[RMDB]
RNA sequence: GGGAACGACUCGAGUAGAGUCGAAAAGAAAGCGCGAGUCGUAUGACCGGCCAAAUGCGACGAGUCCGAUGCUGAAAAAGGCCGGUAAGCAUCAAGGACGAGGCUGCGAAGCAGUCGAGCGCGAAAAGGGAAAUACCUAGUUCGCUAGGUAUUUCCCAAAAGAAACAACAACAACAAC
Reactivity to 2A3 in 0.01 (KOAc 150mM, MgCl2 10mM, bicine 150mM(pH8.5), 24C), signal-to-noise 2, nucleotides 027 to 126: g050a010a010a000g010c000g000c000g020a000g000u000c000g020u100a070u110g140a050c010c010g000g000c000c000a050a120a090u260g040c000g000a010c000g010a010g010u000c000c010g000a010u000g000c000u020g230a040a050a000a000a000g010g000c010c010g000g000u000a030a000g010c000a000u020c020a050a270g020g010a000c000g000a010g000g000c000u000g000c010g190a130a020g040c010a000g000u010c030g040a000g040c010g000c000g010a000a040a040a040
Reactivity to DMS in 0.01 (KOAc 150mM, MgCl2 10mM, bicine 150mM(pH8.5), 24C), signal-to-noise 2, nucleotides 027 to 126: g000a100a090a150g000c030g030c000g000a190g030u020c020g030u000a070u060g000a090c000c000g060g000c000c000a120a040a040u020g040c000g000a010c000g000a150g000u000c010c020g000a040u000g010c030u000g000a050a030a050a060a120g030g010c000c010g010g010u000a000a030g000c030a030u000c000a090a180g010g000a000c000g000a200g000g010c000u020g000c000g000a120a120g010c000a030g020u010c000g010a130g010c000g020c010g010a020a030a100a120